[RMDB]
RNA sequence: GGGAACGACUCGAGUAGAGUCGAAAAUUUCAAGACAAACCAUUUCGCUAAUUGAGCGAAACAAUUUUAUGCCAUCAGUAUUAACGGCAAUAAAGAUUGCUCGCAUUUUCAAUGAAACGGUGGAAACAGCGUAACGACAGUUCGCUGUCGUUACGCUAAAAGAAACAACAACAACAAC
Reactivity to DMS in 0.01 (KOAc 150mM, MgCl2 10mM, bicine 150mM(pH8.5), 24C), signal-to-noise 2, nucleotides 027 to 126: u000u000u030c050a080a080g010a090c140a090a190a070c000c020a080u010u030u020c020g020c070u040a220a030u000u020g000a020g000c000g000a010a080a150c010a000a000u000u020u010u000a100u000g000c000c000a020u000c070a160g080u030a130u010u050a070a100c110g000g000c000a030a020u090a050a030a000g020a010u000u000g010c030u000c000g010c010a150u010u010u100u010c040a030a000u000g010a050a140a050c070g000g020u000g000g010a060a060a060c140
Reactivity to 2A3 in 0.01 (KOAc 150mM, MgCl2 10mM, bicine 150mM(pH8.5), 24C), signal-to-noise 4, nucleotides 027 to 126: u060u040u040c040a110a030g080a070c080a040a090a030c020c030a040u100u170u150c050g000c040u040a050a030u050u030g040a010g030c010g000a030a000a000c010a000a000u010u020u040u030a010u030g000c000c000a090u140c130a140g200u090a210u220u170a180a030c100g030g000c010a030a000u140a030a030a010g180a030u010u010g000c000u000c020g020c020a030u100u070u040u110c030a050a020u070g000a040a020a030c040g000g030u000g010g000a030a090a030c060
This 177-nucleotide RNA was probed chemically with DMS and 2A3. It was measured as part of the RMDB library OK1LIB. Reactivities are given for positions 27 through 126. The RNA was probed in 150 mM KOAc, 10 mM MgCl2 and 150 mM bicine (pH 8.5) at 24 C.